RNA sequence: GGGAACGACUCGAGUAGAGUCGAAAAUGAGUGAUGUGAUGAUAGCGGUCAUCAAUGAGAGAACCUCUGGAUCUCUAGUCUCUGGAAUGUUGGUUCUAUAGUCACCCAAAACGGCCUCUAACAAUGGGAUGUAAGCGUCUUUCGAGACGCUUACAUCAAAAGAAACAACAACAACAAC
Reactivity to DMS in 0.01 (KOAc 150mM, MgCl2 10mM, bicine 150mM(pH8.5), 24C), signal-to-noise 1, nucleotides 027 to 126: u000g000a180g000u000g010a090u010g010u000g000a010u000g010a060u000a090g000c250g070g000u000c060a000u010c060a030a110u000g010a090g010a080g000a040a100c000c000u000c140u040g010g000a110u030c000u010c010u000a120g000u000c000u010c040u040g000g010a060a010u020g030u000u000g040g000u000u030c030u000a060u000a080g030u010c040a070c000c050c050a030a050a180a050c090g000g000c030c030u000c080u030a120a090c230a050a140u020g030g050
Reactivity to 2A3 in 0.01 (KOAc 150mM, MgCl2 10mM, bicine 150mM(pH8.5), 24C), signal-to-noise 2, nucleotides 027 to 126: u130g030a010g120u030g040a070u130g050u060g070a020u000g020a030u050a030g090c120g070g040u020c020a040u000c000a000a210u040g040a050g000a000g010a120a010c000c000u010c060u050g000g130a100u020c010u010c000u180a110g080u040c020u000c000u100g020g010a160a120u060g020u170u040g030g010u020u000c000u000a090u010a050g040u070c010a080c020c000c000a000a080a080a000c080g070g000c070c010u020c020u050a130a050c100a100a190u180g110g020